[RMDB]
RNA sequence: GGGAACGACUCGAGUAGAGUCGAAAAACUUAAAGUUCUAACACCGGUGUACUGGGUCAGUAUACCCACCAACUUUACACUAGCUGCAACAACUGAGUACAUUCAAACCACUGCACCCAAAGUCAAUGUUGACUGUGUUAAGUACCUAUGUGGCGACCAAUAAACACAACUUCGGUUGUGUUUAUUGAAAAGAAACAACAACAACAAC
Reactivity to DMS in 0.01 (KOAc 150mM, MgCl2 10mM, bicine 150mM(pH8.5), 24C), signal-to-noise 3, nucleotides 027 to 156: a090c040u010u000a080a090a130g000u010u000c030u010a110a130c050a060c040c040g000g040u010g060u000a040c010u000g010g000g010u000c030a170g020u000a140u010a050c020c000c020a030c060c030a070a070c080u000u000u000a030c030a050c030u000a060g010c020u000g010c040a100a100c070a030a090c050u000g000a090g020u000a040c040a070u000u000c060a060a070a120c060c030a040c060u000g020c040a050c020c030c030a040a050a050g010u000c010a070a170u000g010u010u010g030a040c040u000g000u000g030u000u000a020a080g010u000a070c070c050u000a070u010g030u000g020g020c010g000a130c110
Reactivity to 2A3 in 0.01 (KOAc 150mM, MgCl2 10mM, bicine 150mM(pH8.5), 24C), signal-to-noise 4, nucleotides 027 to 156: a000c070u120u080a100a070a040g030u150u040c030u070a130a020c050a040c070c050g040g000u030g020u040a050c040u060g090g060g030u100c020a010g040u040a050u060a090c000c000c000a020c040c010a050a090c000u080u080u090a040c050a020c060u050a020g000c050u070g000c030a020a020c000a010a040c090u040g000a010g040u020a040c010a060u030u120c040a050a050a060c040c030a020c050u010g020c040a050c010c030c010a100a050a020g020u020c010a010a090u110g040u080u060g060a010c010u000g000u000g000u040u000a010a030g000u010a030c000c010u060a080u160g050u070g040g010c010g010a020c000